[RMDB]
RNA sequence: GGGAACGACUCGAGUAGAGUCGAAAAGAUAUGGACUCUCCUUUUGACGUGCCUAGUCGGAAACGACUAGAAGCACGAUAAGGAGGUCCUAAGUCAAAACCCGCUGGGCCUUCGGGCCCAGCGGGAAGAAGUAGUAUCAGUUCGCUGAUACUACUUCAAAAGAAACAACAACAACAAC
Reactivity to 2A3 in 0.01 (KOAc 150mM, MgCl2 10mM, bicine 150mM(pH8.5), 24C), signal-to-noise 1, nucleotides 027 to 126: g000a020u010a010u080g000g010a010c000u050c020u050c300c150u030u030u090u170g300a250c080g020u020g010c000c000u000a000g000u010c010g040g000a050a040a050c000g030a000c000u000a010g010a070a010g000c000a000c050g000a000u040a010a000g010g000a000g010g000u010c000c010u000a000a000g010u000c020a010a010a080a240c010c000c000g000c030u040g070g000g000c010c120u230u270c300g070g010g000c030c010c030a020g000c040g000g000g000a050a000
Structure probing data (2A3) for a 177-nucleotide construct. 2A3 adducts were read by reverse transcription with SuperScript II with manganese. It was measured as part of the RMDB library TTRDEL.